[RMDB]
The data come from the RNA Mapping Database (RMDB), library RNAMAK. Chemical mapping of a 207-nucleotide RNA with 2A3 and DMS. For DMS, 7,580 sequencing reads were counted. The 2A3 profile rests on 9,981 reads.
RNA sequence: GGGAACGACUCGAGUAGAGUCGAAAAGACCCAGGUUUCGACCUGGGUCAAAGCGUACUACCUUAGCAUCACGUAACCACGGUAACUCCCAAAUAGGAGUUACUUCUUAUGAUGAACUACUAAGGUAUCGCAAAAGACCUACGCUUCGGCGUAGGUCCCAGUAAAGAGUGUUCGCACUCUUUACUGGAAAAGAAACAACAACAACAAC
Reactivity to 2A3 in 0.01 (KOAc 150mM, MgCl2 10mM, bicine 150mM(pH8.5), 24C), signal-to-noise 8, nucleotides 027 to 156: g010a000c010c000c000a000g080g000u060u100u210c270g110a050c000c000u000g020g000g000u000c000a010a030a000g000c000g030u050a090c060u010a040c030c010u010u010a010g020c030a040u030c010a010c070g060u070a080a070c160c030a080c150g020g000u000a000a000c000u050c000c040c060a130a300a120u270a120g000g000a000g000u000u000a000c000u020u010c020u030u070a050u070g120a120u010g010a060a070c050u110a020c000u000a250a000g030g000u010a020u250c000g000c010a050a060a000a060g000a000c010c000u010a000c000g010c000u030u130c250g130g000c000g000u000a000g000g000u000c010
Reactivity to DMS in 0.01 (KOAc 150mM, MgCl2 10mM, bicine 150mM(pH8.5), 24C), signal-to-noise 3, nucleotides 027 to 156: g010a040c010c000c010a030g010g020u000u000u000c240g020a060c000c000u010g000g020g020u010c010a010a000a060g000c010g020u010a070c170u020a000c000c000u000u000a000g000c000a300u000c010a030c030g020u000a010a040c090c040a090c180g010g010u040a000a010c000u000c000c000c010a020a190a230u010a050g020g010a040g000u000u000a000c000u000u010c010u000u000a030u000g000a230u000g010a060a100c050u010a010c000u000a010a000g010g000u000a050u000c010g020c010a080a060a110a160g010a040c000c000u010a010c000g030c000u000u000c300g050g010c000g020u000a000g000g000u010c000